[RMDB]
RNA sequence: GGGAACGACUCGAGUAGAGUCGAAAAGACGUGGAGGUAUCGCGCCCUCCUUUGCGCGUAAGUACGUCGAAAUUCGGUGCUAUGGAUCGCACCGUUUGAUCCAUUAGAUAUCCGCUCUGUGCCGCGGUUGGGCAUUUACACUUACCCGAAAGGGGAAAAUAUGACUACUGUUCGCAGUAGUCAUAUUAAAAGAAACAACAACAACAAC
Reactivity to DMS in 0.01 (KOAc 150mM, MgCl2 10mM, bicine 150mM(pH8.5), 24C), signal-to-noise 3, nucleotides 027 to 156: g020a060c030g040u010g000g010a070g010g020u010a060u010c060g030c060g020c070c070c040u000c060c070u000u010u000g010c020g040c040g000u000a090a120g020u010a030c040g030u000c030g010a080a050a090u000u000c000g020g040u000g010c020u000a300u000g010g010a160u000c090g000c000a200c050c090g000u000u000u010g010a090u000c000c020a090u000u000a080g000a110u010a090u000c010c020g000c100u000c050u000g010u000g010c050c010g010c040g000g000u000u000g010g010g010c070a100u010u000u000a080c100a080c050u000u000a160c010c000c000g040a080a080a180g010g000g000g000a020a070
Reactivity to 2A3 in 0.01 (KOAc 150mM, MgCl2 10mM, bicine 150mM(pH8.5), 24C), signal-to-noise 4, nucleotides 027 to 156: g040a000c010g010u040g000g090a010g070g050u110a050u190c020g000c000g020c030c040c020u140c020c020u090u050u120g030c020g010c010g020u030a070a040g070u020a030c020g000u030c020g020a020a070a040u100u100c050g020g000u010g000c010u030a030u140g040g060a040u090c060g010c030a080c100c030g010u060u030u100g010a010u010c010c000a010u060u110a030g080a120u070a090u100c030c010g020c050u060c070u110g070u040g010c020c010g030c040g060g010u040u040g030g010g010c000a000u020u040u070a030c070a000c030u080u080a060c000c000c020g040a080a050a030g020g010g010g030a010a020